[RMDB]
RNA sequence: GGGAACGACUCGAGUAGAGUCGAAAACGCUUGCGAAUGUGGCUUUAUCCGUGGCUCACCUGGCUAGUCAUCGGCUUUAUUACCUUUGUGUUGGUAGUGAUGCUAUUCCGUCCGGCGCAACAGUUAGCCUGCGCGCACUAUUCGUAGUGCGCGCAGGAAAAGAAACAACAACAACAAC
Reactivity to 2A3 in 0.01 (KOAc 150mM, MgCl2 10mM, bicine 150mM(pH8.5), 24C), signal-to-noise 1, nucleotides 027 to 126: c030g020c020u030u090g100c090g010a060a030u160g000u070g000g020c000u090u100u170a250u000c000c080g050u090g040g000c020u010c070a050c050c000u000g000g000c030u000a020g080u060c020a120u160c030g000g000c000u180u030u020a070u020u050a100c000c000u000u000u140g120u060g000u170u050g110g030u050a090g060u050g010a050u070g050c060u020a090u200u000c000c000g010u000c050c050g000g000c030g030c000a080a070c000a080g050u100u040a000g000